[RMDB]
RNA sequence: GGGAACGACUCGAGUAGAGUCGAAAAGAUAUGGAGUGAAGAAGCUAGCUGGUCGGAAACGAUGGCCAGCUUGGACCUUCCACUCCUAAGUCAAAGAAAUGCUCAGCCUUCGGGCUGAGCAUUUCAACGAAUUAUCGUACUUCGGUACGAUAAUUCGAAAAGAAACAACAACAACAAC
Reactivity to 2A3 in 0.01 (KOAc 150mM, MgCl2 10mM, bicine 150mM(pH8.5), 24C), signal-to-noise 2, nucleotides 027 to 126: g020a000u050a030u250g010g000a020g010u010g050a150a260g000a040a040g220c020u000a000g030c000u030g000g060u020c060g120g140a300a240a120c130g060a220u300g040g000c000c030a000g000c000u010u000g000g000a020c010c020u000u040c060c020a000c010u020c000c000u020a040a020g030u040c050a150a070a140g000a000a020a010u020g010c000u030c000a000g030c030c000u080u130c300g050g000g000c060u070g000a010g000c010a010u000u000u010c000a010a000
Reactivity to DMS in 0.01 (KOAc 150mM, MgCl2 10mM, bicine 150mM(pH8.5), 24C), signal-to-noise 3, nucleotides 027 to 126: g000a040u020a300u010g010g000a020g010u000g010a070a090g000a060a050g010c020u000a020g020c000u000g000g020u000c000g020g000a110a110a140c200g010a130u020g010g000c000c000a000g000c000u000u010g030g000a180c220c000u010u000c060c040a020c010u000c000c000u000a030a060g020u000c020a080a130a160g000a000a000a010u000g000c010u000c000a000g000c000c000u000u030c210g020g010g000c000u000g010a010g010c000a000u000u000u000c010a100a190
Source information
Source: RMDB library TTRDEL, as collected in RNAgym. Chemical mapping of a 177-nucleotide RNA with 2A3 and DMS. The RNA was probed in 150 mM KOAc, 10 mM MgCl2 and 150 mM bicine (pH 8.5) at 24 C. Reactivities are given for positions 27 through 126. 2A3 is a SHAPE reagent: it acylates the 2'-hydroxyl of flexible nucleotides of all four kinds. For DMS, 2,179 sequencing reads were counted. The 2A3 profile rests on 1,868 reads.